[RMDB]
RNA sequence: GGGAACGACUCGAGUAGAGUCGAAAAUGGCGUUGCGGUCGGCGUCCGCACGCUCUUUGGCGGCGAUGUUCACGCUGACGUACUCCCGGGCCAGACAGUUCCAGGCGGGAAACACGGUGGUGCGUUCGUCGGGUACGACGCGCACGCGCCAGCCGCGUCGUAUAUCCCCGUUCGCGGGGAUAUACGAAAAAGAAACAACAACAACAAC
Reactivity to DMS in 0.01 (KOAc 150mM, MgCl2 10mM, bicine 150mM(pH8.5), 24C), signal-to-noise 1, nucleotides 027 to 156: u000g010g030c030g030u000u010g040c000g020g000u000c020g050g030c080g030u000c010c020g000c000a110c010g010c010u000c030u000u030u000g040g010c010g030g010c030g070a110u000g000u000u010c100a060c060g070c000u010g030a060c030g030u010a080c040u000c040c050c000g030g000g000c020c010a130g020a110c070a090g020u010u000c050c010a220g010g020c070g020g040g030a160a100a180c070a070c030g020g090u000g000g020u000g030c000g070u000u000c030g020u000c030g010g010g000u020a120c000g010a000c010g010c040g020c140a030c000g040c000g030c010c000a080g020c010c000g010c020g030
Reactivity to 2A3 in 0.01 (KOAc 150mM, MgCl2 10mM, bicine 150mM(pH8.5), 24C), signal-to-noise 2, nucleotides 027 to 156: u050g010g020c000g090u080u130g050c050g070g090u040c070g030g000c020g040u040c030c030g000c000a140c000g090c010u080c100u150u080u300g070g000c030g000g000c050g100a140u060g080u110u090c060a030c020g000c010u010g040a030c010g020u070a040c040u050c010c030c000g020g030g000c010c000a020g010a100c040a040g020u000u100c040c040a040g090g000c000g050g000g000a050a110a020c060a010c060g010g000u000g000g010u010g000c000g000u060u120c020g020u000c010g020g000g260u240a150c090g000a000c010g040c020g030c050a000c000g100c010g000c010c000a000g000c000c000g000c000g050